[RMDB]
RNA sequence: GGGAACGACUCGAGUAGAGUCGAAAAGAAAAGACCAGAUCUAGGUCGAUAGAUCUAAAGAAAGGACUUCAGUUGUCCGAACUGAAAAAGAAAAGCGCGAUUGGAGCGCGAUCCAAUCAAAAAGAAAGGGAAACUAUAUCUUCGGAUAUAGUUUCCCAAAAGAAACAACAACAACAAC
Reactivity to DMS in 0.01 (KOAc 150mM, MgCl2 10mM, bicine 150mM(pH8.5), 24C), signal-to-noise 2, nucleotides 027 to 126: g000a050a050a090a100g000a120c040c050a040g020a130u000c020u030a030g000g020u000c030g020a240u070a020g000a030u040c010u000a120a140a080g000a100a140a120g020g010a030c070u000u010c100a060g010u010u020g010u000c050c040g000a030a050c050u000g000a040a020a120a060a100g010a060a090a050a090g000c120g000c150g000a120u000u010g000g010a070g000c080g020c170g010a050u000c000c000a030a070u010c010a080a040a100a130a060g010a070a150a180
Reactivity to 2A3 in 0.01 (KOAc 150mM, MgCl2 10mM, bicine 150mM(pH8.5), 24C), signal-to-noise 1, nucleotides 027 to 126: g070a010a060a000a010g130a010c010c010a010g000a030u060c000u040a040g010g100u040c010g100a040u060a010g020a000u000c010u030a050a270a000g030a000a210a000g030g000a000c000u090u010c090a060g010u100u060g070u110c000c000g010a040a000c000u000g040a010a000a030a080a000g110a060a070a030a020g020c120g020c020g010a020u000u060g000g110a050g000c100g000c090g010a070u020c000c000a030a000u030c000a000a000a080a120a000g110a000a160a000